[RMDB]
RNA sequence: GGGAACGACUCGAGUAGAGUCGAAAAUCGGGGUCCCAUCCGCCUAGUAUUUUGUCGCCGCUCCAUGCGGAGGUGUCUACGAGGACCGUGUUCACGCUGGGCAUAUUUUCUUUGAUUUUGCGUGCUAGGUUUUGUAGGAAUUCGUUCCUACAAAACCAAAAGAAACAACAACAACAAC
Reactivity to DMS in 0.01 (KOAc 150mM, MgCl2 10mM, bicine 150mM(pH8.5), 24C), signal-to-noise 2, nucleotides 027 to 126: u010c080g010g010g000g000u000c010c020c010a150u010c110c100g000c060c020u000a100g010u010a050u000u010u000u000g020u010c060g000c000c030g000c030u010c170c130a140u020g010c050g010g000a050g020g000u000g010u000c060u000a040c070g010a090g000g000a150c080c070g020u010g000u000u000c040a080c050g010c040u000g000g000g010c050a040u000a020u000u020u010u020c100u000u010u000g000a090u010u000u000u000g020c030g010u000g010c170u000a110
Reactivity to 2A3 in 0.01 (KOAc 150mM, MgCl2 10mM, bicine 150mM(pH8.5), 24C), signal-to-noise 2, nucleotides 027 to 126: u060c020g000g020g020g070u040c050c000c010a060u050c040c010g100c020c000u010a050g020u020a120u030u150u120u200g090u040c030g030c000c020g050c050u080c080c120a160u200g050c020g020g010a030g040g020u050g010u030c030u020a050c030g030a050g030g000a000c030c060g030u050g050u100u100c010a010c030g020c060u020g050g010g040c030a010u060a060u100u110u090u040c050u050u110u150g100a180u050u080u130u160g030c030g020u020g020c070u100a030
Chemical mapping of a 177-nucleotide RNA with DMS and 2A3.
For DMS the reverse transcriptase was MarathonRT.
Conditions: 150 mM KOAc, 10 mM MgCl2 and 150 mM bicine (pH 8.5), 24 C.
High DMS reactivity at an A or C suggests that its Watson-Crick edge is free.
Reactivities are given for positions 27 through 126.
It was measured as part of the RMDB library OK2TST.